[RMDB]
RNA sequence: GGGAACGACUCGAGUAGAGUCGAAAAAAAUGCUGGGAUUACAGGCAUGAGCCACUGCGGUCGACCAUGACCUGGACAUGUUUGUGCCCAGUACUGUAAAAUCCAUUAACGCUUCGGCGUUAAUGGAGGUAUUUAAAUGGUUCGCCAUUUAAAUACCAAAAGAAACAACAACAACAAC
Reactivity to DMS in 0.01 (KOAc 150mM, MgCl2 10mM, bicine 150mM(pH8.5), 24C), signal-to-noise 7, nucleotides 027 to 126: a060a050a100u000g010c000u000g000g000g010a060u010u000a010c010a010g000g000c000a000u000g000a160g000c010c000a070c300u000g030c250g010g000u000c010g010a130c300c190a120u010g000a030c010c000u010g000g000a050c010a000u000g010u000u000u000g010u000g000c010c000c000a010g010u000a010c120u000g010u000a070a080a080a230u000c000c000a010u000u000a000a010c000g010c000u000u010c210g020g010c000g020u000u000a000a010u000g000g000a010
Reactivity to 2A3 in 0.01 (KOAc 150mM, MgCl2 10mM, bicine 150mM(pH8.5), 24C), signal-to-noise 7, nucleotides 027 to 126: a000a000a020u100g000c010u010g010g000g040a070u150u280a060c010a010g010g000c000a010u010g010a050g080c020c010a090c140u300g090c120g030g010u000c010g040a200c110c080a170u300g000a010c000c010u020g000g000a000c000a000u000g010u000u020u000g000u000g010c010c010c000a000g000u000a010c010u030g080u060a030a070a020a120u000c000c000a000u000u010a010a000c000g000c020u040u070c240g110g000c000g000u000u010a000a000u000g000g000a000
An RNA of 177 nucleotides, treated with DMS and 2A3 and read out base by base. 2A3 adducts were read by reverse transcription with SuperScript II with manganese. It was measured as part of the RMDB library RFMREP. High 2A3 reactivity points to a flexible backbone, as in loops and unpaired stretches. The DMS profile rests on 10,055 reads.